[RMDB]
RNA sequence: GGGAACGACUCGAGUAGAGUCGAAAAUGAUUACAACUACUGCUCAGCCAGUAAAAGCAAGUACAUUAGAGGUUAGAUCACAAGCUACUCAAGACUUGAGUGAAUAUUAUAAAGGGAGAGGAUUUGAGCGUUGCAGUGGUUUCGACCACUGCAACGCAAAAGAAACAACAACAACAAC
Reactivity to 2A3 in 0.01 (KOAc 150mM, MgCl2 10mM, bicine 150mM(pH8.5), 24C), signal-to-noise 1, nucleotides 027 to 126: u050g030a030u240u000a000c000a120a000c000u100a100c000u000g140c000u000c090a000g100c300c150a000g000u120a110a170a000a000g120c090a000a000g000u000a120c100a120u040u040a020g000a000g180g080u120u000a000g050a120u000c000a000c000a300a000g000c030u000a000c000u000c090a000a000g050a140c050u160u100g000a070g000u030g090a090a000u170a100u300u070a170u020a160a030a000g120g100g000a000g000a000g030g100a100u090u020u000g000a000
Conditions: 150 mM KOAc, 10 mM MgCl2 and 150 mM bicine (pH 8.5), 24 C. This 177-nucleotide RNA was probed chemically with 2A3. 2A3 adducts were read by reverse transcription with SuperScript II with manganese. Reactivities are given for positions 27 through 126.